Background:
Chemical mapping of a 177-nucleotide RNA with DMS and 2A3. It was measured as part of the RMDB library TTRDES. 2A3 adducts were read by reverse transcription with SuperScript II with manganese. For DMS the reverse transcriptase was MarathonRT. The RNA was probed in 150 mM KOAc, 10 mM MgCl2 and 150 mM bicine (pH 8.5) at 24 C.
[RMDB]
RNA sequence: GGGAACGACUCGAGUAGAGUCGAAAAAAAGAUAUGGACGUGCGGGAGCGGCAUAUGUCCGACGAUCGCUUUCGGAAACGAAAGCGGGAGGACGUAUAUCGCGAAGAACGCACGUCCUAAGUCAAAACCCUACUAAAGAGUUCGCUCUUUAGUAGGGAAAAGAAACAACAACAACAAC
Reactivity to DMS in 0.01 (KOAc 150mM, MgCl2 10mM, bicine 150mM(pH8.5), 24C), signal-to-noise 4, nucleotides 027 to 126: a060a050a080g000a030u000a300u010g000g010a010c010g010u000g010c010g010g000g000a160g020c000g000g000c100a020u000a000u010g010u010c000c000g000a070c300g000a040u020c000g010c000u000u010u000c000g000g000a100a080a200c010g000a000a000a010g020c010g010g000g000a030g010g000a010c000g010u000a000u000a020u000c010g020c020g010a110a120g000a140a200c010g010c000a010c000g000u000c000c000u000a010a070g000u000c020a090a070a090a140
Reactivity to 2A3 in 0.01 (KOAc 150mM, MgCl2 10mM, bicine 150mM(pH8.5), 24C), signal-to-noise 2, nucleotides 027 to 126: a010a010a030g060a030u070a050u110g000g000a000c010g010u000g010c010g010g010g030a080g020c010g010g020c010a010u020a010u010g000u000c010c010g010a140c020g000a090u030c010g000c000u010u000u010c010g020g010a060a060a040c010g000a000a000a000g000c040g000g000g000a010g000g010a000c000g000u000a010u010a000u020c000g000c010g060a120a050g020a060a010c000g000c020a000c000g000u000c010c000u010a000a000g000u000c010a010a020a020a070